[RMDB]
RNA sequence: GGGAACGACUCGAGUAGAGUCGAAAAAGCUACGGAUAUACGUAUCCGUAGCAACAUCUAUGAUGAUCCUAUCCCGAACCUGAAUUCUUUGCUGAAAAACCUACUACGGAUCCGGCAUCUGAGAUAAGAACUUCAACAUAUUCGUAUGUUGAAGUUCAAAAGAAACAACAACAACAAC
Reactivity to DMS in 0.01 (KOAc 150mM, MgCl2 10mM, bicine 150mM(pH8.5), 24C), signal-to-noise 4, nucleotides 027 to 126: a090g000c000u000a010c000g000g000a000u000a020u010a050c220g040u000a000u000c000c000g010u000a000g010c000a030a040c060a040u000c040u030a120u040g000a050u020g000a100u010c040c000u000a070u010c030c000c010g020a110a110c110c050u000g010a130a100u000u010c030u000u000u000g000c040u020g000a040a030a040a150a070c060c030u000a090c150u010a090c150g010g000a050u000c100c040g000g010c020a020u010c060u000g000a060g000a090u030a050a120
Reactivity to 2A3 in 0.01 (KOAc 150mM, MgCl2 10mM, bicine 150mM(pH8.5), 24C), signal-to-noise 9, nucleotides 027 to 126: a000g000c000u000a000c000g000g000a000u010a000u010a030c240g070u020a010u000c000c000g000u000a000g030c000a000a010c010a000u000c030u130a110u190g050a030u030g020a040u060c010c020u050a080u040c010c010c010g030a070a080c020c030u070g080a100a080u100u050c020u060u080u080g040c050u050g070a060a020a020a050a060c040c030u080a130c040u050a040c140g030g010a040u020c010c030g030g000c010a030u000c040u070g100a080g020a080u110a170a050
Structure probing data (DMS and 2A3) for a 177-nucleotide construct. Conditions: 150 mM KOAc, 10 mM MgCl2 and 150 mM bicine (pH 8.5), 24 C.